[RMDB]
RNA sequence: GGGAACGACUCGAGUAGAGUCGAAAAGGCAUGAUGGAAGAGCAGAGAGGAUGGUGCGAAGGCUGGCUCAGCAGGCACCAGGUGGAGUGACAGGAUGAGGUUCGGCAGUGGGGUCUGUAGAGGGCUCCUGUAAGUCCAAUUUCGAUUGGACUUACAGAAAAGAAACAACAACAACAAC
Reactivity to 2A3 in 0.01 (KOAc 150mM, MgCl2 10mM, bicine 150mM(pH8.5), 24C), signal-to-noise 2, nucleotides 027 to 126: g070g010c060a030u080g040a020u060g100g040a060a020g010a020g020c050a010g040a010g010a020g110g000a040u080g010g030u050g000c040g010a110a020g100g000c040u050g060g060c030u040c130a040g000c030a040g130g010c020a000c010c020a030g030g040u030g020g030a060g010u060g010a020c030a050g000g060a060u060g040a020g040g020u100u070c020g060g000c010a020g040u070g030g030g000g010u000c040u100g030u070a050g000a030g080g020g000c020u030c020
Reactivity to DMS in 0.01 (KOAc 150mM, MgCl2 10mM, bicine 150mM(pH8.5), 24C), signal-to-noise 5, nucleotides 027 to 126: g000g000c050a050u010g010a090u000g010g010a060a060g010a090g010c060a060g010a090g010a080g000g010a100u000g010g020u000g010c050g000a090a130g010g010c020u000g010g000c120u010c040a070g000c030a120g010g010c040a020c020c020a060g010g020u000g000g000a080g000u010g000a070c090a070g010g000a090u000g010a080g010g000u000u000c100g010g010c050a070g010u000g010g010g000g010u000c000u000g010u010a090g010a090g000g000g010c040u000c040